Structure probing data (DMS and 2A3) for a 207-nucleotide construct. DMS adducts were read by reverse transcription with MarathonRT. Reactivities are given for positions 27 through 156. The RNA was probed in 150 mM KOAc, 10 mM MgCl2 and 150 mM bicine (pH 8.5) at 24 C. It was measured as part of the RMDB library RNAMAK.
[RMDB]
RNA sequence: GGGAACGACUCGAGUAGAGUCGAAAAGGGGCAUUCGUGCCCCGUUAUAGCGUACUACUAGACAUGUCGGAUGUUGGGAGGUGCGUCCCAAAUAGGACGCACCAUCGAUCAACUGACGACAACAGCUAGUAUCGCACCUGGCGGACUUCGGUCCGAAACCUUGACUUACGUUCGCGUAAGUCAAGGUAAAAGAAACAACAACAACAAC
Reactivity to DMS in 0.01 (KOAc 150mM, MgCl2 10mM, bicine 150mM(pH8.5), 24C), signal-to-noise 1, nucleotides 027 to 156: g000g030g070g040c000a010u000u000c220g050u000g000c000c000c000c030g000u000u000a010u000a040g050c010g000u020a100c180u000a000c000u000a030g000a080c090a300u000g000u010c000g000g000a120u000g000u000u000g010g040g010a070g070g040u000g000c000g000u000c000c020c020a070a170a160u000a050g040g060a040c030g000c000a050c010c000a000u010c110g000a120u010c000a030a000c010u000g000a300c030g000a100c000a010a050c100a160g070c020u010a050g010u000a030u010c030g010c030a120c040c030u010g030g030c030g030g000a070c000u000u030c240g100g010u000c000c000g020a010a090
Reactivity to 2A3 in 0.01 (KOAc 150mM, MgCl2 10mM, bicine 150mM(pH8.5), 24C), signal-to-noise 2, nucleotides 027 to 156: g020g010g000g000c020a030u100u140c220g110u040g010c000c000c000c000g000u000u050a070u060a030g020c000g040u050a050c010u000a020c000u000a030g060a150c060a190u130g000u000c000g070g010a000u030g020u000u000g000g080g010a050g000g000u000g000c010g000u010c050c020c010a150a160a060u300a080g000g000a000c000g000c000a000c010c000a010u070c000g010a070u030c000a000a000c000u030g050a010c010g000a000c000a000a000c020a010g020c010u020a010g040u020a100u280c000g000c000a020c000c000u060g100g130c000g010g000a000c010u090u090c180g170g010u000c000c000g040a060a020